[RMDB]
RNA sequence: GGGAACGACUCGAGUAGAGUCGAAAAGGCGUAGUAUUAUGAAGUGUGUGUAAAGAGCAUACUGAAGUACUGGAGGGCAAGUCUGGUGCCAGCAGCCGCGGUAAUACCAGCUCCAGUAGCGUCUGUGUCACUCUCUGUAGUUCGCUACAGAGAGUGAAAAAGAAACAACAACAACAAC
Reactivity to 2A3 in 0.01 (KOAc 150mM, MgCl2 10mM, bicine 150mM(pH8.5), 24C), signal-to-noise 8, nucleotides 027 to 126: g010g000c020g010u040a020g060u050a150u300u040a110u230g110a080a010g000u000g000u000g000u010g030u070a050a070a040g060a030g010c000a000u010a010c000u020g020a050a000g030u000a000c000u000g010g000a010g010g030g050c080a100a000g060u000c010u010g000g000u020g030c070c090a040g000c020a040g140c050c140g010c030g000g010u100a100a030u040a120c000c000a010g020c010u000c010c000a010g000u010a010g000c000g010u000c010u030g120u050g040
Reactivity to DMS in 0.01 (KOAc 150mM, MgCl2 10mM, bicine 150mM(pH8.5), 24C), signal-to-noise 9, nucleotides 027 to 126: g010g010c000g020u000a110g000u020a060u030u020a070u020g010a150a020g000u000g020u000g000u000g000u010a110a120a180g000a300g010c000a010u010a010c000u000g000a110a060g010u000a010c010u000g000g000a030g000g010g020c190a040a090g020u050c020u000g010g000u000g000c020c010a080g040c030a130g020c190c180g010c040g000g000u000a110a100u040a170c010c000a020g000c000u000c000c000a020g010u000a030g000c010g010u000c010u000g000u020g000
Notes
Structure probing data (2A3 and DMS) for a 177-nucleotide construct. 2A3 adducts were read by reverse transcription with SuperScript II with manganese. For DMS the reverse transcriptase was MarathonRT. The reactions ran in a buffer of 150 mM KOAc, 10 mM MgCl2 and 150 mM bicine (pH 8.5), at 24 C. Values cover nucleotides 27 to 126.